RNA sequence: GGGAACGACUCGAGUAGAGUCGAAAAUCUGAUUGCUUAACUGCUUCAGUUAAGACCGAAGCGCUCGUCGUAUAACAGAUGCGAUGAUGCAGACCAAUCAACAUGGCACCUGCCAUUGCUACCUGUAGCCUAAACCAAAGUUCGCUUUGGUUUAGGCAAAAGAAACAACAACAACAAC
Reactivity to 2A3 in 0.01 (KOAc 150mM, MgCl2 10mM, bicine 150mM(pH8.5), 24C), signal-to-noise 7, nucleotides 027 to 126: u050c020u010g030a100u080u230g020c010u100u070a100a060c110u090g080c080u140u120c040a020g010u060u090a050a010g060a050c040c030g070a070a020g060c020g010c080u050c030g060u000c010g020u070a060u070a280a040c020a020g050a050u020g000c000g000a000u000g030a040u160g000c000a040g130a260c000c000a040a050u190c050a020a050c040a150u040g020g000c050a090c060c030u040g000c000c000a000u000u030g020c000u040a070c020c000u020g030u020a050
Reactivity to DMS in 0.01 (KOAc 150mM, MgCl2 10mM, bicine 150mM(pH8.5), 24C), signal-to-noise 2, nucleotides 027 to 126: u060c050u010g050a000u000u010g010c030u030u000a040a100c060u000g000c120u010u050c000a020g010u000u000a030a140g000a060c100c030g040a060a090g000c010g000c030u000c040g000u000c060g030u000a050u060a150a060c170a030g000a060u000g020c030g000a000u000g000a070u010g000c030a040g000a110c120c020a010a010u000c120a100a200c170a070u040g000g010c030a150c110c100u010g000c000c010a000u000u000g040c010u020a080c160c000u000g000u000a090
Structure probing data (2A3 and DMS) for a 177-nucleotide construct. The DMS profile rests on 2,618 reads. DMS adducts were read by reverse transcription with MarathonRT. Source: RMDB library OK1LIB, as collected in RNAgym. The RNA was probed in 150 mM KOAc, 10 mM MgCl2 and 150 mM bicine (pH 8.5) at 24 C.